RNA sequence: GGGAACGACUCGAGUAGAGUCGAAAAAGCUAGUCGGCUUACGAGCCGACUAGCAACAAGUCACUAGUGGUUCCGUUUAGUAGAUGAUUAUGCAUUGUUUCAAAAUGGUGCCCUAGUGACUGCAAAAUCCUUUGUCUUUGUUCGCAAAGACAAAGGAAAAAGAAACAACAACAACAAC
Reactivity to DMS in 0.01 (KOAc 150mM, MgCl2 10mM, bicine 150mM(pH8.5), 24C), signal-to-noise 2, nucleotides 027 to 126: a050g010c000u000a000g030u000c000g000g000c020u000u000a120c170g020a030g010c020c010g000a010c000u000a010g060c010a040a010c190a090a040g010u010c010a030c000u000a030g030u070g020g030u000u000c000c000g010u000u010u000a100g010u010a060g000a010u000g000a130u010u130a150u040g020c140a030u000u000g000u020u000u000c030a080a030a000a020u000g000g070u010g020c020c000c000u000a020g010u000g000a010c000u020g000c190a090a040a090a140
Reactivity to 2A3 in 0.01 (KOAc 150mM, MgCl2 10mM, bicine 150mM(pH8.5), 24C), signal-to-noise 4, nucleotides 027 to 126: a000g000c010u000a000g000u000c010g020g000c020u020u050a040c240g050a000g000c000c000g000a000c000u000a000g000c010a000a000c000a000a010g010u010c000a000c000u000a010g030u100g300g010u030u010c010c000g000u000u010u010a120g020u070a020g020a010u000g030a050u040u250a120u300g130c030a010u000u050g090u110u210u060c040a030a030a000a040u010g010g000u010g000c010c000c000u000a000g000u000g000a010c000u000g010c010a030a060a010a080

This 177-nucleotide RNA was probed chemically with DMS and 2A3. 2A3 adducts were read by reverse transcription with SuperScript II with manganese. For DMS the reverse transcriptase was MarathonRT. The DMS profile rests on 3,525 reads. The data come from the RNA Mapping Database (RMDB), library RFM100.